An RNA of 177 nucleotides, treated with DMS and 2A3 and read out base by base. DMS adducts were read by reverse transcription with MarathonRT. For 2A3 the reverse transcriptase was SuperScript II with manganese. The RNA was probed in 150 mM KOAc, 10 mM MgCl2 and 150 mM bicine (pH 8.5) at 24 C.
[RMDB]
RNA sequence: GGGAACGACUCGAGUAGAGUCGAAAAUGGCGAUGAUAGAAAUCUUGUGCAACGGCCGAGGCGAUCGGAUUGCGACGUCGCCUGAGAAGGCGGGACCCAACGUCGCGCCUUUCGCCAGACGAUGGAUUUCCUUAUCCACUUUCGAGUGGAUAAGGAAAAAAGAAACAACAACAACAAC
Reactivity to DMS in 0.01 (KOAc 150mM, MgCl2 10mM, bicine 150mM(pH8.5), 24C), signal-to-noise 2, nucleotides 027 to 126: u020g040g020c050g010a040u010g010a090u030a110g000a070a050a050u000c010u000u010g000u000g010c060a130a100c060g010g010c040c050g000a100g010g000c000g000a030u010c030g030g000a010u000u050g020c000g000a020c000g020u000c050g000c000c000u000g000a210g000a150a020g000g000c000g020g000g000a190c030c030c070a150a080c050g010u000c010g000c020g000c010c000u010u000u010c000g000c000c000a090g010a070c070g010a070u010g010g020a210u000
Reactivity to 2A3 in 0.01 (KOAc 150mM, MgCl2 10mM, bicine 150mM(pH8.5), 24C), signal-to-noise 3, nucleotides 027 to 126: u110g030g010c030g020a030u070g040a040u090a130g110a040a100a030u040c060u070u100g030u050g070c040a080a060c050g090g000c060c040g020a040g010g010c010g000a000u010c000g010g010a090u070u300g010c000g000a000c000g010u220c000g000c000c000u000g010a030g010a030a000g000g010c000g040g040g110a110c000c000c030a020a000c010g010u000c000g000c010g020c020c010u010u000u010c000g010c000c000a000g000a000c050g040a060u120g060g030a020u020